[RMDB]
RNA sequence: GGGAACGACUCGAGUAGAGUCGAAAAGGAGUGCUACCGAAAGGUAGCACUCCAACAAAUCGGUGUAAGUAAAGCCGGUCUUACACCGUGCGGCACAGCGGAAACGCUGAUGUCGUAUACACGGCUAUACCUAUUAUCGUUUCGACGAUAAUAGGUAAAAAGAAACAACAACAACAAC
Reactivity to DMS in 0.01 (KOAc 150mM, MgCl2 10mM, bicine 150mM(pH8.5), 24C), signal-to-noise 5, nucleotides 027 to 126: g010g010a020g030u000g010c000u010a010c000c000g000a110a110a180g010g010u000a010g010c000a000c000u010c000c000a020a050c100a040a080a060u010c000g000g010u000g000u000a000a010g000u000a050a080a060g010c000c000g000g000u010c000u000u000a010c010a010c000c000g020u000g010c010g000g020c000a020c000a010g000c010g020g000a150a110a210c000g020c000u000g000a050u000g040u000c000g020u010a040u010a060c200a090c000g000g000c000u000a300
Reactivity to 2A3 in 0.01 (KOAc 150mM, MgCl2 10mM, bicine 150mM(pH8.5), 24C), signal-to-noise 2, nucleotides 027 to 126: g000g000a000g010u020g010c000u010a010c000c000g060a080a060a060g000g000u010a000g000c000a000c000u000c000c000a000a000c000a000a000a000u100c000g000g000u000g000u000a010a020g000u030a100a130a040g000c000c000g030g010u030c010u010u010a000c000a000c020c010g000u040g000c000g000g000c000a000c000a010g000c010g020g020a090a050a010c020g000c000u000g000a050u010g000u000c000g000u000a000u020a010c060a010c010g010g000c010u010a030
This 177-nucleotide RNA was probed chemically with DMS and 2A3. The DMS profile rests on 10,290 reads. Values cover nucleotides 27 to 126. Conditions: 150 mM KOAc, 10 mM MgCl2 and 150 mM bicine (pH 8.5), 24 C. Source: RMDB library OK2TRN, as collected in RNAgym. For DMS the reverse transcriptase was MarathonRT. For 2A3, 15,661 sequencing reads were counted.